[RMDB]
RNA sequence: GGGAACGACUCGAGUAGAGUCGAAAACGCACAUCGCGGAUCCGUUUGUGGCACUCUGUAUCUGAACCUAAGAGAUAGCAAUCUGCGUGUGCCAACAACACGUCGUCGUCGUUAAAUUACUACGCGACCGACCGCUCAGUUUCGACUGAGCGGUCGGAAAAGAAACAACAACAACAAC
Reactivity to 2A3 in 0.01 (KOAc 150mM, MgCl2 10mM, bicine 150mM(pH8.5), 24C), signal-to-noise 1, nucleotides 027 to 126: c050g140c000a000c000a010u230c060g010c000g000g040a000u130c000c140g040u020u040u220g130u100g070g000c010a000c100u040c040u240g170u090a120u180c000u100g100a110a100c000c000u010a080a000g090a000g010a000u040a060g030c000a000a030u060c000u040g030c000g000u000g000u000g000c000c000a130a000c000a000a000c030a050c110g050u000c000g000u040c000g020u000c000g000u010u000a000a140a000u250u030a010c030u000a040c000g000c000g120a030
This 177-nucleotide RNA was probed chemically with 2A3. 2A3 adducts were read by reverse transcription with SuperScript II with manganese. It was measured as part of the RMDB library OK1LIB.